[RMDB]
RNA sequence: GGGAACGACUCGAGUAGAGUCGAAAAGAUGGAUCUCCACUUCCAACUGAUGCUUCUGGUGCAGCUAUUGGACCAGAUGGAGAACCUAUUCCAACUGAUUCUAGUGGAAGACCAAUUUCGAAGGAUGCUUGCUCAAGUGAUUCGUCACUUGAGCAAGAAAAGAAACAACAACAACAAC
Reactivity to DMS in 0.01 (KOAc 150mM, MgCl2 10mM, bicine 150mM(pH8.5), 24C), signal-to-noise 3, nucleotides 027 to 126: g010a130u020g010g000a060u000c010u000c000c000a050c010u000u000c010c000a000a010c100u000g000a060u000g020c040u000u010c250u010g020g020u010g010c010a020g010c030u010a130u000u000g010g000a030c300c190a010g010a060u000g000g000a000g000a030a060c030c020u000a080u000u000c010c030a080a130c080u000g040a130u010u000c090u010a030g010u000g010g000a020a030g000a160c050c090a060a120u010u010u010c040g010a060a100g010g010a140u000g010
Reactivity to 2A3 in 0.01 (KOAc 150mM, MgCl2 10mM, bicine 150mM(pH8.5), 24C), signal-to-noise 4, nucleotides 027 to 126: g070a030u140g020g000a060u000c000u000c010c000a000c000u040u010c000c020a030a020c050u080g020a110u050g030c050u120u160c120u300g210g120u200g020c000a010g000c020u060a040u030u060g000g030a010c090c070a080g020a200u020g000g000a010g020a010a020c020c000u010a080u010u000c020c020a110a100c090u070g060a260u210u000c030u060a040g040u050g090g000a010a050g030a070c010c040a050a160u060u090u110c070g080a100a020g130g050a050u090g060
The data come from the RNA Mapping Database (RMDB), library OK2TRN. Chemical mapping of a 177-nucleotide RNA with DMS and 2A3. The reactions ran in a buffer of 150 mM KOAc, 10 mM MgCl2 and 150 mM bicine (pH 8.5), at 24 C. The DMS profile rests on 2,233 reads. 2A3 adducts were read by reverse transcription with SuperScript II with manganese. For 2A3, 2,950 sequencing reads were counted.